Conditions: 150 mM KOAc, 10 mM MgCl2 and 150 mM bicine (pH 8.5), 24 C.
This 207-nucleotide RNA was probed chemically with 2A3.
It was measured as part of the RMDB library M2RFPK.
RNA sequence: GGGAACGACUCGAGUAGAGUCGAAAAGUGAACGAUCUCGGUUGUUUCUCUGAAGGCAUGAUCACCCCGUCCGAUGCGGAAGUUCGUGCUUCCGUCGAACCCGAAAGUCGGACGGCGGCCAUGAGUCAAUAUGUUUAAGGCUUCGGCCUUAAACAAAGUCCACCCCUUAAUUCGUUAAGGGGUGGACAAAAGAAACAACAACAACAAC
Reactivity to 2A3 in 0.01 (KOAc 150mM, MgCl2 10mM, bicine 150mM(pH8.5), 24C), signal-to-noise 1, nucleotides 027 to 156: g120u060g020a080a040c060g080a050u040c040u060c140g040g000u000u000g000u040u030u020c020u010c030u020g100a160a110g120g040c010a000u000g000a010u020c040a100c000c010c030c000g010u000c000c000g000a010u000g020c000g000g010a080a050g030u090u300c080g080u250g040c000u080u040c000c030g050u040c000g010a080a070c060c000c000g120a100a100a020g030u000c000g000g000a000c000g000g000c010g010g000c060c000a020u010g030a000g000u000c030a030a080u110a070u260g000u000u000u000a000a000g000g050c070u050u060c210g080g000c000c000u000u000a000a000a000c000a010a010a010
For 2A3, 680 sequencing reads were counted.